Notes: This 177-nucleotide RNA was probed chemically with DMS and 2A3.
RNA sequence: GGGAACGACUCGAGUAGAGUCGAAAAUGAAAGACCGUCGCAAACACACAGACUAAGUCUCACACUGACUGACGCUAAACCGCUCUGUCAGUGUGGGAGAUAUCGGUAUUAAUGUGAGCGGAAAAAAGUAUAUCGUGUUCUUCGGAACACGAUAUACAAAAGAAACAACAACAACAAC
Reactivity to DMS in 0.01 (KOAc 150mM, MgCl2 10mM, bicine 150mM(pH8.5), 24C), signal-to-noise 3, nucleotides 027 to 126: u000g000a090a070a100g000a180c000c020g000u000c000g010c030a040a090a100c150a050c050a070c100a070g000a040c090u000a060a180g000u000c000u000c000a000c000a000c010u010g010a030c000u000g020a000c120g010c010u000a020a060a110c250c120g000c050u010c010u000g010u010c000a010g020u000g020u000g000g000g010a010g000a100u000a050u020c050g010g040u000a030u000u000a090a150u000g020u000g000a110g010c000g000g020a010a010a040a030a060a060
Reactivity to 2A3 in 0.01 (KOAc 150mM, MgCl2 10mM, bicine 150mM(pH8.5), 24C), signal-to-noise 3, nucleotides 027 to 126: u120g030a060a040a000g080a020c010c010g010u020c010g010c030a030a130a050c050a000c010a000c030a050g060a020c050u080a100a060g140u020c010u000c000a000c000a000c000u000g010a010c000u020g000a030c090g000c030u110a160a120a140c060c030g020c030u000c000u010g000u000c000a000g000u010g000u000g000g010g000a000g010a000u110a020u050c020g010g010u040a050u100u110a110a090u060g000u020g000a050g030c020g000g000a130a020a000a030a000a010
The data come from the RNA Mapping Database (RMDB), library M2PK90. For DMS, 2,680 sequencing reads were counted.